[RMDB]
RNA sequence: GGGAACGACUCGAGUAGAGUCGAAAACUUGGCGGAACGACGAAAGAUAGUGGGGGCCUCACAGAAUACGGGUAAAGUAUAAUGAAACCGUACCAGAGAUUCAACCCUGUGCAGUGUAUAAAUACACAGCCUCUACAAACUUCGGUUUGUAGAGGCUAAAAGAAACAACAACAACAAC
Reactivity to 2A3 in 0.01 (KOAc 150mM, MgCl2 10mM, bicine 150mM(pH8.5), 24C), signal-to-noise 2, nucleotides 027 to 126: c000u080u010g000g000c000g090g000a150a020c070g030a020c000g060a240a000a210g040a000u040a000g000u020g000g020g000g060g010c000c040u000c000a080c000a000g010a070a060u040a060c000g000g100g140u240a130a140a000g100u160a120u180a300a100u210g060a090a000a040c050c000g000u000a010c000c000a000g000a000g000a000u050u050c060a130a080c000c000c000u000g150u160g000c080a040g070u000g000u100a100u050a130a290a000u100a000c030a000c000
Reactivity to DMS in 0.01 (KOAc 150mM, MgCl2 10mM, bicine 150mM(pH8.5), 24C), signal-to-noise 2, nucleotides 027 to 126: c020u010u000g030g060c000g000g000a070a000c050g020a030c180g000a060a070a070g000a050u010a060g000u000g000g020g000g020g000c170c030u000c050a030c110a180g000a240a020u020a070c000g000g000g010u000a020a140a200g050u000a110u060a140a180u050g000a110a110a130c000c000g000u000a000c110c050a120g000a130g000a050u020u000c070a070a140c160c040c040u020g000u010g080c170a080g000u000g000u000a210u030a020a020a050u020a090c080a000c100